[RMDB]
RNA sequence: GGGAACGACUCGAGUAGAGUCGAAAAGAUAUGGAUUGUGGGAGUCCGUGAUCGGAAACGAUCACCGGGACGAAGAACACACUGUCCUAAGUCAAAACCUGGAGAGUAGUUCGCUACUCUCCAGGAAGAUGGAGUUAUUGUUCGCAAUAACUCCAUCAAAAGAAACAACAACAACAAC
Reactivity to 2A3 in 0.01 (KOAc 150mM, MgCl2 10mM, bicine 150mM(pH8.5), 24C), signal-to-noise 3, nucleotides 027 to 126: g000a000u030a000u090g010g000a000u010u090g020u020g010g030g020a090g020u000c020c010g000u000g010a000u000c010g000g010a000a020a010c010g000a010u020c000a000c030c050g200g040g010a000c030g090a120a030g030a020a010c020a000c010a010c140u120g090u020c000c000u010a040a000g000u020c020a020a070a180a250c000c000u000g000g000a000g000a010g000u000a000g000u040u130c300g020c110u000a000c000u010c000u000c000c000a000g000g000a000a000
Reactivity to DMS in 0.01 (KOAc 150mM, MgCl2 10mM, bicine 150mM(pH8.5), 24C), signal-to-noise 5, nucleotides 027 to 126: g000a030u000a130u000g000g000a030u010u000g010u000g000g000g010a110g030u000c010c010g010u000g000a010u000c000g000g000a030a030a070c000g020a010u000c000a000c300c300g050g010g000a010c010g010a080a080g000a100a210c070a030c020a010c300u010g000u000c000c000u000a030a070g000u010c030a100a050a090a190c000c010u000g010g000a020g000a020g000u000a000g010u000u020c260g010c010u000a000c000u000c000u000c000c000a010g000g020a010a010